[RMDB]
RNA sequence: GGGAACGACUCGAGUAGAGUCGAAAAGCCUCUAAUUCCUCGGUGUUGUCACUUGUUAACUUCACCGUUGAUCCUCAAAAAGCUUAUCUCGAUUUCGUCAAUGCGGGAGGUGCCCCAUUGACAAAUUUAAGAACCCGGUUCGCCGGGUUCAAAAGAAACAACAACAACAAC
Reactivity to 2A3 in 0.01 (KOAc 150mM, MgCl2 10mM, bicine 150mM(pH8.5), 24C), signal-to-noise 3, nucleotides 027 to 129: g020c000c000u040c010u060a080a110u040u000c000c000u000c000g010g030u000g020u000u000g080u040c050a060c260u130u060g060u120u140a050a030c000u030u000c000a010c000c030g010u010u000g000a030u010c030c000u020c080a070a060a010a010a050g050c050u110u060a090u150c050u020c000g100a080u020u080u060c060g010u000c020a000a010u000g030c130g000g000g000a130g160g200u150g180c010c000c000c020a010u000u000g000a000c000a000a050a030u040u000u020a060a010
Reactivity to DMS in 0.01 (KOAc 150mM, MgCl2 10mM, bicine 150mM(pH8.5), 24C), signal-to-noise 3, nucleotides 027 to 129: g000c020c010u030c100u070a210a150u020u020c000c000u010c020g020g010u000g010u010u070g020u040c090a080c160u090u090g020u080u040a060a110c000u000u030c050a060c060c010g020u090u010g000a110u010c060c000u020c040a090a090a130a260a060g020c080u060u050a120u030c060u000c080g000a110u000u030u000c040g050u000c000a000a020u000g000c170g000g000g000a290g060g060u040g000c030c000c000c000a030u030u020g010a020c020a000a000a030u000u000u000a180a060